[RMDB]
RNA sequence: GGGAACGACUCGAGUAGAGUCGAAAAAGCCACCGCUACGGCGGAGGCAAGUAGAAAAGUUGGUGCUUAGACCACGCCCUCUACCGUAAUAAUAGAUAAAUAGGCGAGUAUCAGUACGCUGAUACAAAAAACACUCACACGUUCGCGUGUGAGUGAAAUUAGUUUUCCAAUUCGUUGGAAAACUAAUAAAAGAAACAACAACAACAAC
Reactivity to 2A3 in 0.01 (KOAc 150mM, MgCl2 10mM, bicine 150mM(pH8.5), 24C), signal-to-noise 4, nucleotides 027 to 156: a000g000c000c000a020c010c000g010c010u030a020c180g110g000c000g000g000a010g000g000c010a020a030g030u040a010g030a050a020a010a020g040u070u040g020g000u070g040c180u210u120a030g040a080c010c010a000c000g000c000c010c000u000c010u010a030c020c020g060u040a080a040u080a160a040u070a170g100a050u130a080a110a040u120a050g030g030c040g020a020g010u000a000u020c010a000g030u040a030c200g000c100u000g000a000u000a010c010a000a210a000a000a000a000c010a000c000u000c000a000c000a000c000g030u050u050c210g000c000g070u000g000u000g000a000g000u000g000a000a000
Reactivity to DMS in 0.01 (KOAc 150mM, MgCl2 10mM, bicine 150mM(pH8.5), 24C), signal-to-noise 2, nucleotides 027 to 156: a170g030c000c000a060c010c000g030c010u000a060c230g120g020c000g010g020a010g000g040c010a000a030g010u000a130g000a150a080a120a140g000u010u000g020g030u000g020c070u010u000a130g020a130c010c020a060c020g000c020c000c010u010c030u000a020c000c020g020u010a110a110u000a120a200u010a090g010a080u010a040a000a090u010a040g000g020c020g020a080g000u000a020u000c010a040g020u000a100c300g050c000u020g020a030u040a000c010a000a050a060a140a070a120c010a000c000u010c000a000c000a000c000g010u010u000c300g030c050g050u000g000u000g000a000g010u000g020a000a010